[RMDB]
RNA sequence: GGGAACGACUCGAGUAGAGUCGAAAAAUGAAUCGGGCACCAGGAGGAAAGAUGUACGCAGAUGACACUGCUGGCUGGGACACCCGCAUUAGUAAGUUUGAUCUGGAGAAUGAAGCUCUGAUUACCACCAUGCCAUCAUUUUCGAAUGAUGGCAUGGAAAAGAAACAACAACAACAAC
Reactivity to DMS in 0.01 (KOAc 150mM, MgCl2 10mM, bicine 150mM(pH8.5), 24C), signal-to-noise 3, nucleotides 027 to 126: a070u090g000a070a060u030c000g000g030g010c300a100c010c020a070g000g000a130g000g000a090a090a040g000a080u010g060u000a130c140g000c060a040g000a150u030g010a100c140a070c020u000g020c040u020g000g000c000u020g010g000g010a090c300a190c060c030c000g040c060a060u030u020a070g010u010a040a110g030u030u020u000g000a060u010c020u010g000g000a080g000a060a060u030g010a130a170g000c020u000c020u000g000a050u000u010a080c090c100a190
Reactivity to 2A3 in 0.01 (KOAc 150mM, MgCl2 10mM, bicine 150mM(pH8.5), 24C), signal-to-noise 3, nucleotides 027 to 126: a010u120g020a020a030u040c010g010g020g000c080a010c020c010a030g030g040a030g030g060a140a160a020g150a070u140g070u200a020c050g010c040a020g010a150u120g030a040c000a040c120u010g000c000u010g140g010c010u010g000g000g070a060c010a080c080c010c000g000c010a020u010u020a000g070u060a020a090g020u040u060u110g050a070u000c020u070g060g000a000g040a080a180u210g080a110a010g030c020u010c020u030g050a050u020u040a060c030c020a020